[RMDB]
This 177-nucleotide RNA was probed chemically with DMS. For DMS the reverse transcriptase was MarathonRT. The reactions ran in a buffer of 150 mM KOAc, 10 mM MgCl2 and 150 mM bicine (pH 8.5), at 24 C.

RNA sequence: GGGAACGACUCGAGUAGAGUCGAAAAUUUGAGUUACGCGACCGGGGACGCCGAACUUCUGUCCCAGUUGCUGUUGGUACUGUUGCGCACGAGCCUGAUCGCUUACGGCCCCGACUUGCACCAUAAAGUAUAGGGUGUAGUUCGCUACACCCUAUACAAAAGAAACAACAACAACAAC
Reactivity to DMS in 0.01 (KOAc 150mM, MgCl2 10mM, bicine 150mM(pH8.5), 24C), signal-to-noise 4, nucleotides 027 to 126: u000u000u010g000a090g010u010u020a100c150g000c020g020a050c030c070g000g000g010g030a150c050g030c090c080g010a060a060c050u000u000c130u000g010u020c000c000c010a180g010u000u000g010c020u010g000u000u000g000g000u000a090c070u000g000u000u000g020c100g020c070a050c060g000a080g020c030c030u010g000a070u000c100g000c020u000u000a090c080g010g000c010c030c030c050g010a060c080u000u020g010c070a080c090c040a070u010a080a060a120